[RMDB]
RNA sequence: GGGAACGACUCGAGUAGAGUCGAAAAUUGAAGAGGUCAUUAGGUAUUUUAUUCUCUUUGUAGCAAUUGUGAAUGGGAGUUCACUCAUGAUUUGGUGCUCUGUUUGCCUAUUAUUGGUGUAUAGGAAUGCUUGUGAUUUUCACACAUUGAUUUUGUACUAGUAGGUGUCUUUCGAGACACCUACUAGAAAAGAAACAACAACAACAAC
Reactivity to DMS in 0.01 (KOAc 150mM, MgCl2 10mM, bicine 150mM(pH8.5), 24C), signal-to-noise 2, nucleotides 027 to 156: u010u010g000a100a060g020a060g020g010u010c070a110u000u010a060g030g010u000a050u020u000u010u010a080u020u010c030u010c030u000u000u000g040u000a080g020c060a050a050u000u000g040u000g000a070a070u010g020g020g010a200g000u000u000c040a050c070u000c090a050u000g010a090u010u010u000g030g020u010g000c030u010c060u000g020u000u000u000g020c020c030u010a060u010u000a090u000u000g010g030u000g010u000a070u000a120g000g010a060a040u000g000c020u000u000g020u000g000a150u000u000u010u010c050a050c010a040c080a010u000u000g000a160u000u010u000u000g010u010a190
Reactivity to 2A3 in 0.01 (KOAc 150mM, MgCl2 10mM, bicine 150mM(pH8.5), 24C), signal-to-noise 3, nucleotides 027 to 156: u100u100g050a080a030g020a010g020g020u050c030a040u080u090a020g020g040u080a100u040u170u070u040a130u230u060c040u030c010u030u050u050g050u080a020g000c020a090a150u110u120g030u030g040a060a100u060g020g010g020a090g020u080u100c030a020c030u100c050a050u060g090a120u030u020u140g030g010u000g030c000u000c020u050g040u060u070u080g040c000c000u060a080u260u020a070u030u130g030g020u020g030u010a050u030a060g060g030a040a000u030g020c050u070u040g020u010g040a080u040u040u220u230c040a060c000a020c000a030u040u090g080a130u140u100u070u100g040u010a030